[RMDB]
RNA sequence: GGGAACGACUCGAGUAGAGUCGAAAAACCGGGAUGAGCGAGCGAAGACAACGCAUCUGCGGCGCGAAAUAUGAAGGGGGAGAGCCCUUAUAGACCAGGUAGUACACGUUUGGUUAGGGGGCCUGCAUUCUCCUUCACGUUUCGACGUGAAGGAGAAAAAAGAAACAACAACAACAAC
Reactivity to DMS in 0.01 (KOAc 150mM, MgCl2 10mM, bicine 150mM(pH8.5), 24C), signal-to-noise 2, nucleotides 027 to 126: a140c000c000g020g000g000a070u010g000a070g040c010g040a090g020c000g000a190a060g010a120c120a070a070c090g010c020a150u020c020u010g020c120g020g000c020g000c020g010a010a020a020u000a150u010g010a090a060g020g010g000g020g000a060g010a160g000c010c010c010u000u010a050u030a110g000a010c010c040a010g000g010u010a100g000u000a080c200a060c060g000u000u010u000g000g000u000u000a110g000g010g000g020g030c020c050u000g010c120a120
Reactivity to 2A3 in 0.01 (KOAc 150mM, MgCl2 10mM, bicine 150mM(pH8.5), 24C), signal-to-noise 2, nucleotides 027 to 126: a000c060c030g020g090g050a070u030g040a020g080c030g010a010g000c010g030a100a040g040a090c010a040a050c030g040c020a050u010c000u110g030c030g080g000c030g000c000g060a010a120a000u140a050u060g070a050a090g000g000g000g010g000a030g000a030g030c000c020c000u010u050a200u050a020g050a000c000c000a010g000g010u010a020g060u090a100c100a010c110g030u030u090u050g010g010u000u010a040g020g000g000g000g020c000c000u010g000c010a080
An RNA of 177 nucleotides, treated with DMS and 2A3 and read out base by base.
The DMS profile rests on 3,577 reads.
The reactions ran in a buffer of 150 mM KOAc, 10 mM MgCl2 and 150 mM bicine (pH 8.5), at 24 C.
DMS adducts were read by reverse transcription with MarathonRT.